The record gives the reactivity of an RNA of 177 nucleotides to DMS and 2A3. The 2A3 profile rests on 4,398 reads. The DMS profile rests on 7,935 reads. Reactivities are rounded to 0.1 and cut off at 0 and 3. 2A3 adducts were read by reverse transcription with SuperScript II with manganese. Source: RMDB library OK2TST, as collected in RNAgym. Conditions: 150 mM KOAc, 10 mM MgCl2 and 150 mM bicine (pH 8.5), 24 C.
[RMDB]
RNA sequence: GGGAACGACUCGAGUAGAGUCGAAAAGUUCAUCAGGCCUGUAGCUGCCACAGUCAUCACUGUGGCUGAGAUUCAUACCUGUAGCACCAGAGUGGGAGGCAAUUUUUCCAACAUGGGGCAGAGGCUGCCUAGAAGGUCAUUUCGAUGACCUUCUAGGAAAAGAAACAACAACAACAAC
Reactivity to DMS in 0.01 (KOAc 150mM, MgCl2 10mM, bicine 150mM(pH8.5), 24C), signal-to-noise 6, nucleotides 027 to 126: g010u010u000c050a120u010c040a050g020g000c020c050u000g030u010a070g010c040u000g000c000c010a010c000a000g010u000c240a140u010c180a130c000u010g030u000g010g000c010u010g000a020g000a110u010u000c040a040u000a060c030c020u000g010u000a100g020c050a050c030c030a040g000a160g020u000g010g010g000a050g000g000c200a050a050u010u000u000u000u000c020c020a040a060c110a080u000g010g000g010g030c020a100g000a080g010g000c080u000g000
Reactivity to 2A3 in 0.01 (KOAc 150mM, MgCl2 10mM, bicine 150mM(pH8.5), 24C), signal-to-noise 3, nucleotides 027 to 126: g010u050u060c010a060u020c030a070g000g050c010c020u050g020u080a030g030c040u020g000c010c000a000c000a010g040u030c060a070u150c050a070c030u020g000u000g000g000c000u010g010a020g000a050u080u090c030a010u060a140c000c010u040g030u080a030g000c020a020c030c010a000g100a030g110u070g030g010g000a020g060g030c040a050a080u180u110u020u050u000c010c010a040a020c030a130u080g010g000g010g030c020a010g020a020g110g000c030u040g030